Notes
This 177-nucleotide RNA was probed chemically with DMS and 2A3. The DMS profile rests on 2,671 reads. Reactivities are given for positions 27 through 126.
RNA sequence: GGGAACGACUCGAGUAGAGUCGAAAAUCUUAGGAGUUCGCUCCUAAGAAAAGGGCGAGGCCGUGCCAGCUCUUCGGAGCAAUACUCGCCCAGUCACUCAGAAUGCGCUACCCUUCGGGGUAGCGAACUACUUUCGUGUAUUCGUACACGAAAGUAGAAAAGAAACAACAACAACAAC
Reactivity to DMS in 0.01 (KOAc 150mM, MgCl2 10mM, bicine 150mM(pH8.5), 24C), signal-to-noise 3, nucleotides 027 to 126: u000c010u000u000a020g010g020a030g020u010u020c240g020c000u000c000c000u010a000a010g000a020a030a120a090g000g010g010c000g010a020g010g010c110c170g000u000g010c120c100a170g000c000u000c000u000u020c140g030g010a020g000c000a100a080u000a070c000u000c000g000c000c000c010a060g010u000c120a100c060u000c040a120g020a110a080u010g000c000g000c000u000a010c010c000c010u000u020c210g030g020g010g000u000a000g010c000g000a000a060
Reactivity to 2A3 in 0.01 (KOAc 150mM, MgCl2 10mM, bicine 150mM(pH8.5), 24C), signal-to-noise 3, nucleotides 027 to 126: u020c000u000u010a010g000g000a010g010u040u080c150g110c070u020c010c000u010a010a010g000a010a020a000a010g020g000g000c010g010a000g030g040c110c110g130u060g090c080c080a030g000c020u000c000u040u080c230g110g000a020g000c000a000a020u040a050c000u000c020g010c000c010c010a000g050u050c020a010c040u070c010a040g130a190a090u180g060c010g000c000u000a000c000c010c000u040u050c200g040g000g000g010u000a000g000c000g000a000a000

The 2A3 profile rests on 4,258 reads.